[RMDB]
Structure probing data (DMS and 2A3) for a 177-nucleotide construct.
2A3 adducts were read by reverse transcription with SuperScript II with manganese.
The 2A3 profile rests on 824 reads.
DMS adducts were read by reverse transcription with MarathonRT.
RNA sequence: GGGAACGACUCGAGUAGAGUCGAAAAGAGAAUGGAUCACUGAGAGUCCCGUAUUUCGGUUCAUCAACGUCUGAGAGGUCGGAGGCAUCCGUGAAUACUACUAGAGGAUUGUCGAGAGCCGCAAAAGAAGUGUCUGUGAAUUCGUUCACAGACACUUAAAAGAAACAACAACAACAAC
Reactivity to DMS in 0.01 (KOAc 150mM, MgCl2 10mM, bicine 150mM(pH8.5), 24C), signal-to-noise 2, nucleotides 027 to 126: g000a110g030a060a060u010g010g000a090u000c040a120c110u030g000a100g010a190g000u010c020c010c010g010u000a080u000u000u010c050g000g000u000u010c010a070u020c040a050a060c040g010u000c040u000g000a160g010a080g010g010u000c020g000g010a110g030g000c220a070u000c010c020g000u000g010a080a100u000a090c160u000a050c070u010a120g000a220g020g000a060u000u010g020u000c020g010a110g000a080g000c010c000g020c300a060a050a060a110g010
Reactivity to 2A3 in 0.01 (KOAc 150mM, MgCl2 10mM, bicine 150mM(pH8.5), 24C), signal-to-noise 1, nucleotides 027 to 126: g110a010g060a170a040u160g000g060a050u090c040a030c130u100g030a000g000a020g170u020c060c020c000g050u010a170u000u060u000c010g000g000u050u010c040a170u040c010a300a010c050g070u020c010u000g070a060g000a040g090g000u030c000g000g010a020g050g000c050a020u000c010c010g020u010g050a020a010u120a160c090u020a030c020u010a000g030a070g150g000a030u000u270g060u050c020g000a030g040a010g060c000c040g110c020a030a040a000a030g110